[RMDB]
This 177-nucleotide RNA was probed chemically with 2A3 and DMS. The RNA was probed in 150 mM KOAc, 10 mM MgCl2 and 150 mM bicine (pH 8.5) at 24 C. For 2A3, 1,225 sequencing reads were counted.
RNA sequence: GGGAACGACUCGAGUAGAGUCGAAAAGAGCCGACAGAGAAGUCGGGAAGCGACGAGAGAGAAUAGAAAACAUUGGAAUUCGAGAUACUGCCACAAAAUGACAGACGUCGCCAUAUUCUCUGAGAAGCGAUGAUCCUGAGUUCGCUCAGGAUCAUCGAAAAGAAACAACAACAACAAC
Reactivity to 2A3 in 0.01 (KOAc 150mM, MgCl2 10mM, bicine 150mM(pH8.5), 24C), signal-to-noise 3, nucleotides 027 to 126: g070a000g070c000c000g040a000c010a020g230a010g070a260a030g010u010c020g000g020g020a020a000g070c000g000a000c010g000a010g010a000g000a030g030a130a050u070a070g120a130a150a050a030c070a040u100u110g050g040a030a050u020u000c020g000a000g010a130u100a070c030u000g040c030c030a100c020a050a060a040a090u190g010a010c000a010g100a030c000g040u050c020g000c000c000a030u060a010u080u020c000u000c000u070g090a070g050a160a040g060
Reactivity to DMS in 0.01 (KOAc 150mM, MgCl2 10mM, bicine 150mM(pH8.5), 24C), signal-to-noise 2, nucleotides 027 to 126: g000a250g030c070c000g000a090c000a090g010a180g060a070a060g000u010c020g000g000g000a100a200g010c000g000a060c000g010a300g000a130g000a160g000a010a020u000a030g000a140a110a050a290c210a100u010u020g000g040a080a090u010u000c040g000a080g010a110u030a060c010u000g030c010c000a120c080a050a110a160a240u000g000a060c000a020g010a300c040g050u030c000g000c000c040a080u030a080u000u000c000u000c000u000g000a060g000a030a070g040